This 177-nucleotide RNA was probed chemically with DMS. Reactivities are given for positions 27 through 126. For DMS, 1,370 sequencing reads were counted. The RNA was probed in 150 mM KOAc, 10 mM MgCl2 and 150 mM bicine (pH 8.5) at 24 C. Source: RMDB library OK2TST, as collected in RNAgym.

RNA sequence: GGGAACGACUCGAGUAGAGUCGAAAAUGGCCCGGCAGGUAUGGGCGGCGUCACGCUCUGCGGACACACUGCUAGGACGGUCGAUCGACCUGUUUGCCCAGUUCGCUGGCCUAUUGACGUCGGUUAAUAUUAGCGCAGUCUUCGGACUGCGCUAAUAAAAAGAAACAACAACAACAAC
Reactivity to DMS in 0.01 (KOAc 150mM, MgCl2 10mM, bicine 150mM(pH8.5), 24C), signal-to-noise 2, nucleotides 027 to 126: u020g010g010c000c020c010g020g020c020a060g010g020u020a070u010g000g020g050c030g020g000c000g000u010c000a150c190g000c030u020c160u000g040c020g000g000a140c120a130c200a140c120u000g010c060u010a110g000g010a040c040g000g020u020c050g010a140u000c210g000a020c000c020u020g000u000u000u020g000c030c300c050a060g000u000u000c050g020c080u000g010g020c010c140u010a100u010u010g010a050c050g000u000c010g010g000u010u000a120a150